[RMDB]
RNA sequence: GGGAACGACUCGAGUAGAGUCGAAAAUCAUCGUUCUUCGGAACGAUGAAGUAUAACCCGGGCUCCGGACACAGGCGUAGCUGGCCUGGGAUAGUCACAGUAUGGGGCAAACUUUCGAGUUUGCCAACACUAAGCAUUGAUUCGUCAAUGCUUAGUGAAAAGAAACAACAACAACAAC
Reactivity to 2A3 in 0.01 (KOAc 150mM, MgCl2 10mM, bicine 150mM(pH8.5), 24C), signal-to-noise 9, nucleotides 027 to 126: u010c000a000u000c000g010u010u000c010u040u040c260g090g000a000a000c000g000a000u000g000a000a010g000u030a090u030a120a070c000c000c000g000g050g000c040u070c070c050g110g020a040c040a010c010a150g110g000c040g070u090a040g060c110u110g070g010c000c000u010g010g000g000a090u120a030g060u050c030a020c020a150g100u130a130u240g130g000g000g070c050a000a000a000c020u090u080u120c230g060a020g010u000u010u000g000c000c000a020a000
Reactivity to DMS in 0.01 (KOAc 150mM, MgCl2 10mM, bicine 150mM(pH8.5), 24C), signal-to-noise 9, nucleotides 027 to 126: u000c000a000u000c000g010u000u000c000u010u010c200g020g000a010a010c000g010a010u000g000a010a050g010u000a100u010a120a130c010c000c000g020g000g000c050u010c060c060g010g000a080c090a140c050a030g010g000c050g010u000a100g010c120u010g000g000c010c000u000g010g010g010a070u000a050g010u000c040a080c150a100g010u010a090u010g010g010g010g010c000a010a000a010c000u000u000u010c190g010a030g010u000u000u000g010c000c010a050a090
The record gives the reactivity of an RNA of 177 nucleotides to 2A3 and DMS. The DMS profile rests on 28,224 reads. DMS adducts were read by reverse transcription with MarathonRT. Values are in units of 0.01, from 0 to 300, in steps of 10. Reactivities are given for positions 27 through 126.